The record gives the reactivity of an RNA of 177 nucleotides to 2A3 and DMS. It was measured as part of the RMDB library TTRDEL. 2A3 adducts were read by reverse transcription with SuperScript II with manganese. The reactions ran in a buffer of 150 mM KOAc, 10 mM MgCl2 and 150 mM bicine (pH 8.5), at 24 C. In probing experiments dimethyl sulfate is read out at A N1 and C N3, which are open when not base-paired.
RNA sequence: GGGAACGACUCGAGUAGAGUCGAAAAGAUAUGGACUCAGGACAUGCUUUCGGGUCGGAAACGACCUUCGAGCAACAGCCUGGGUCCUAAGUCAAAACUGCAGUUCAUGUUCGCAUGAACUGCAGAACCACAUUCUACAGUUCGCUGUAGAAUGUGGAAAAGAAACAACAACAACAAC
Reactivity to 2A3 in 0.01 (KOAc 150mM, MgCl2 10mM, bicine 150mM(pH8.5), 24C), signal-to-noise 3, nucleotides 027 to 126: g010a010u060a050u130g010g000a000c000u000c010a010g000g030a060c070a200u110g000c000u040u020u040c020g010g010g020u000c020g020g000a090a080a010c000g010a000c000c000u000u020c020g000a000g020c010a030a010c030a020g080c000c000u000g010g000g000u000c000c010u010a010a000g010u010c000a000a000a080a140c000u000g000c000a000g000u000u000c000a000u000g040u020u140c300g010c190a010u010g000a000a000c000u000g000c000a000g000a000a010
Reactivity to DMS in 0.01 (KOAc 150mM, MgCl2 10mM, bicine 150mM(pH8.5), 24C), signal-to-noise 3, nucleotides 027 to 126: g000a050u000a300u000g000g000a030c000u000c010a020g000g000a040c070a170u000g010c000u000u000u000c250g000g000g010u000c000g000g020a050a130a180c000g020a010c000c000u000u010c210g000a010g010c020a020a080c270a140g020c010c000u000g010g010g010u000c000c010u000a010a060g000u010c020a050a060a080a150c020u000g010c010a020g010u000u000c010a000u000g000u000u000c250g010c000a010u000g000a010a010c000u000g000c000a000g000a030a120
For DMS, 2,993 sequencing reads were counted.